[RMDB]
RNA sequence: GGGAACGACUCGAGUAGAGUCGAAAACCGAGCUUGUCGACCUCGACGAUAUACGGGACCACCUUGACCUGCGUGCUCUGGUAAAGAGCGUAGCUGAAGCCGACGACCGCCAUGGUCAUCCCGGUGAAUAAUACCAUGGUUUCGACCAUGGUAUUAUAAAAGAAACAACAACAACAAC
Reactivity to 2A3 in 0.01 (KOAc 150mM, MgCl2 10mM, bicine 150mM(pH8.5), 24C), signal-to-noise 9, nucleotides 027 to 126: c000c000g000a030g040c070u110u100g030u080c020g030a170c020c030u090c040g040a040c030g030a060u070a010u030a170c030g020g010g030a030c010c010a030c020c020u040u090g070a070c000c020u030g020c020g050u090g010c010u000c010u030g110g110u270a120a150a020g030a010g000c020g020u030a030g010c040u050g040a060a010g020c020c010g030a050c030g010a020c020c010g050c060c060a150u230g020g000u020c010a020u020c010c010c000g010g020u060g050a030
Reactivity to DMS in 0.01 (KOAc 150mM, MgCl2 10mM, bicine 150mM(pH8.5), 24C), signal-to-noise 9, nucleotides 027 to 126: c030c010g000a090g010c080u000u010g010u010c030g010a130c100c070u010c030g010a100c050g000a070u020a070u020a080c050g010g000g000a120c050c050a070c060c040u000u010g000a060c080c020u010g000c030g020u020g000c000u000c010u000g010g030u050a090a130a040g000a020g010c000g020u010a090g010c030u020g000a110a130g000c020c020g010a090c090g000a060c040c030g010c110c090a080u030g000g010u010c060a120u000c040c020c000g000g010u030g010a110